[RMDB]
RNA sequence: GGGAACGACUCGAGUAGAGUCGAAAAUUUUCUUCUCCACGACUACCCCUGUAUGCAUGUGACACAGAUCUUUGUAUUGAUCCCAUACAGCAUUCUCAAACUUUCUUGAGUCAAUUUUAUUGAGAGACUAGCAACUAUCGUUCGCGAUAGUUGCUAGAAAAGAAACAACAACAACAAC
Reactivity to DMS in 0.01 (KOAc 150mM, MgCl2 10mM, bicine 150mM(pH8.5), 24C), signal-to-noise 2, nucleotides 027 to 126: u020u010u000u050c040u000u020c080u020c000c020a070c070g020a160c000u070a010c050c000c010c070u040g030u040a040u000g000c040a060u000g030u000g050a100c070a110c090a080g000a090u000c020u010u030u000g000u050a070u060u000g030a140u000c040c030c000a200u000a070c050a070g000c090a050u000u000c030u040c050a010a050a060c110u000u000u020c050u000u000g000a080g000u000c030a000a090u000u020u000u020a070u040u060g000a070g010a150g030a090
Reactivity to 2A3 in 0.01 (KOAc 150mM, MgCl2 10mM, bicine 150mM(pH8.5), 24C), signal-to-noise 6, nucleotides 027 to 126: u030u030u030u030c010u040u000c010u000c000c030a060c040g050a020c020u100a070c020c000c000c020u020g020u050a040u040g040c070a040u050g030u080g070a020c050a020c010a130g050a140u020c060u050u190u120g100u090a130u040u130g070a040u010c000c010c010a010u050a090c030a020g030c020a050u170u010c010u010c020a070a060a040c000u080u140u070c030u060u090g020a030g050u030c020a120a200u110u050u260u250a150u120u150g030a060g000a000g020a070